[RMDB]
RNA sequence: GGGAACGACUCGAGUAGAGUCGAAAAGGAAGGGUGAGGUUGAGCAUGUUUGAAGGGAGGAUCAGACGUUUAGUUUUGCUGAUGGUGCUAAGUAGGAGAAGUCUCUUAGAUGUCCAAGUGGAGAGUUGAAAGGAGGUAUGAUCUGAAGCUGAGAUAAAGUGAGUCCCUGAUUCGUCAGGGACUCACUAAAAGAAACAACAACAACAAC
Reactivity to 2A3 in 0.01 (KOAc 150mM, MgCl2 10mM, bicine 150mM(pH8.5), 24C), signal-to-noise 2, nucleotides 027 to 156: g100g040a000a000g070g060g040u060g050a060g020g100u080u060g010a060g090c080a070u140g180u110u020u040g130a060a030g000g020g000a040g020g020a040u060c010a010g110a080c020g040u030u080u270a090g020u000u010u220u180g010c030u010g030a100u030g020g020u000g000c010u050a150a070g000u050a040g100g020a100g000a120a010g150u110c030u000c010u030u030a160g000a160u140g050u000c050c000a060a030g010u050g060g030a020g000a000g020u040u080g080a160a060a050g000g000a000g000g020u070a060u060g050a060u120c000u020g050a010a010g030c010u020g000a020g000a140u170a000a160
Conditions: 150 mM KOAc, 10 mM MgCl2 and 150 mM bicine (pH 8.5), 24 C. Structure probing data (2A3) for a 207-nucleotide construct. It was measured as part of the RMDB library OK3TST. Reactivities are given for positions 27 through 156.